[RMDB]
RNA sequence: GGGAACGACUCGAGUAGAGUCGAAAAGAUAUGGAUCUCGAAGCGAUAAGAUGACAUCGGAAACGAUGUCCAUCUUUUGACGCCGAGAUCCUAAGUCAAAACGUACUCCACUUCGGUGGAGUACGAACUUUCUCAAUUAGUUCGCUAAUUGAGAAAGAAAAGAAACAACAACAACAAC
Reactivity to 2A3 in 0.01 (KOAc 150mM, MgCl2 10mM, bicine 150mM(pH8.5), 24C), signal-to-noise 7, nucleotides 027 to 126: g010a000u020a000u060g000g000a000u000c010u010c030g080a300a090g030c020g080a110u140a300a050g000a010u010g000a000c000a000u000c000g000g020a020a000a010c010g000a000u010g000u000c050c000a000u000c000u030u090u060u140g060a020c010g010c010c000g010a000g000a000u000c000c000u000a000a000g010u000c020a030a020a050a100c010g000u000a000c000u000c010c000a000c010u050u070c240g150g000u000g000g000a000g000u000a000c000g000a000a000
Reactivity to DMS in 0.01 (KOAc 150mM, MgCl2 10mM, bicine 150mM(pH8.5), 24C), signal-to-noise 7, nucleotides 027 to 126: g000a030u000a170u010g000g000a010u000c000u000c000g010a110a120g020c000g020a130u010a040a010g010a010u000g000a020c000a000u000c000g000g010a040a040a110c010g010a010u000g000u000c160c170a010u000c000u000u000u000u010g020a130c050g000c040c000g000a010g000a000u000c000c000u000a000a040g000u000c030a100a060a110a200c020g000u000a010c000u000c000c000a010c000u000u010c180g020g010u000g000g000a020g000u000a000c000g010a020a040